[RMDB]
RNA sequence: GGGAACGACUCGAGUAGAGUCGAAAAGGCAGUUUUAUAGAAUCACCCCAACUUAAGCCUCAAUCUCUCGAAAAGGAUCAAAAUAGGAUUUUGAUGAGAACUUGAUUGAAUGACCAAAGAUGGAGGACCUUCUCAUAUCGUUCGCGAUAUGAGAAGGAAAAGAAACAACAACAACAAC
Reactivity to DMS in 0.01 (KOAc 150mM, MgCl2 10mM, bicine 150mM(pH8.5), 24C), signal-to-noise 3, nucleotides 027 to 126: g000g000c060a140g000u020u020u020u010a160u010a100g010a190a120u030c080a200c010c000c020c010a030a060c020u000u020a100a170g000c020c010u040c010a050a030u000c040u000c000u000c020g000a040a060a140a100g010g000a030u000c000a050a010a000a050u020a140g000g010a300u000u000u010u000g010a080u010g010a080g010a090a100c250u000u000g000a070u000u000g020a050a050u010g010a080c030c060a090a060a020g000a100u010g010g020a030g020g000a220
Reactivity to 2A3 in 0.01 (KOAc 150mM, MgCl2 10mM, bicine 150mM(pH8.5), 24C), signal-to-noise 2, nucleotides 027 to 126: g030g040c020a010g000u030u030u130u110a260u070a130g200a110a030u110c050a180c010c030c030c000a000a010c040u100u110a130a020g010c010c000u030c000a010a010u000c000u000c000u010c000g120a080a040a040a040g060g010a020u000c020a010a060a140a080u200a090g060g120a040u050u000u000u040g030a040u080g010a010g010a070a040c070u140u110g000a020u020u060g000a040a020u110g020a010c000c020a000a090a000g050a020u090g000g040a100g090g020a010